[RMDB]
RNA sequence: GGGAACGACUCGAGUAGAGUCGAAAAAGGCCACCCUUGGCAGAAGCACUGAUAAGAUCGUGAGCCAAGUUCACAUCAAUAUAAUGGCAAAGGACUGUUCCAAUAAGUGUUUGUGGGAAAAAUUAGGCACCUCUUCGAGAUUCGUCUCGAAGAGGUGAAAAGAAACAACAACAACAAC
Reactivity to DMS in 0.01 (KOAc 150mM, MgCl2 10mM, bicine 150mM(pH8.5), 24C), signal-to-noise 2, nucleotides 027 to 126: a160g010g040c010c020a080c090c100c050u000u030g000g020c040a040g000a160a060g010c020a030c000u020g050a060u010a120a090g030a260u010c080g010u000g000a140g040c030c080a050a040g020u000u020c100a030c090a020u000c070a060a050u000a030u000a110a090u000g000g050c050a040a070a100g020g000a070c140u000g000u000u000c000c020a050a060u010a090a110g000u000g030u000u000u000g030u020g000g020g000a020a040a060a090a060u000u020a130g000g000
Reactivity to 2A3 in 0.01 (KOAc 150mM, MgCl2 10mM, bicine 150mM(pH8.5), 24C), signal-to-noise 1, nucleotides 027 to 126: a010g090g000c050c000a020c000c030c000u030u040g080g060c160a140g100a130a000g000c050a000c090u190g040a110u030a070a060g060a050u000c130g030u010g030a030g050c000c000a000a030g000u050u050c110a080c000a070u090c060a130a020u200a000u090a300a070u040g000g000c000a070a050a040g000g030a000c080u010g060u150u090c010c000a030a140u120a140a030g000u000g070u050u090u040g110u110g000g020g140a000a160a010a000a070u180u130a110g200g000

Structure probing data (DMS and 2A3) for a 177-nucleotide construct. The DMS profile rests on 939 reads. In probing experiments dimethyl sulfate is read out at A N1 and C N3, which are open when not base-paired. For 2A3 the reverse transcriptase was SuperScript II with manganese. The reactions ran in a buffer of 150 mM KOAc, 10 mM MgCl2 and 150 mM bicine (pH 8.5), at 24 C.